Chemical mapping of a 207-nucleotide RNA with 2A3. Values are in units of 0.01, from 0 to 300, in steps of 10.
[RMDB]
RNA sequence: GGGAACGACUCGAGUAGAGUCGAAAAAGCUGAAAUUCGUUUCAGCUAAAGCGUACUACUCUGGGAGAAGUCACCUACCCACCAUGGAUCCCAAAUAGGAUCCAUGAGGGUGGUUUCGAGGAUCAGAGUAUCGCAAAUACCUGACUUCGGUCAGGUAGCCCGUACAAGAUUUCGAUCUUGUACGGGCAAAAGAAACAACAACAACAAC
Reactivity to 2A3 in 0.01 (KOAc 150mM, MgCl2 10mM, bicine 150mM(pH8.5), 24C), signal-to-noise 1, nucleotides 027 to 156: a000g010c000u000g020a000a000a040u170u160c240g110u150u050u010c020a020g000c000u010a110a000a000g000c000g050u070a130c040u000a000c000u030c000u000g000g030g000a100g000a000a010g010u100c020a000c000c000u040a120c080c020c050a040c000c000a000u000g000g000a010u000c010c020c020a150a300a000u300a020g010g010a000u020c010c000a000u010g000a000g000g020g000u000g000g010u000u000u000c060g050a190g000g030a010u000c010a000g070a010g020u000a000u090c010g000c010a110a070a000u080a000c040c030u020g000a000c000u010u010c300g080g000u000c000a010g040g000u030a000

Values cover nucleotides 27 to 156. For 2A3, 822 sequencing reads were counted. The RNA was probed in 150 mM KOAc, 10 mM MgCl2 and 150 mM bicine (pH 8.5) at 24 C.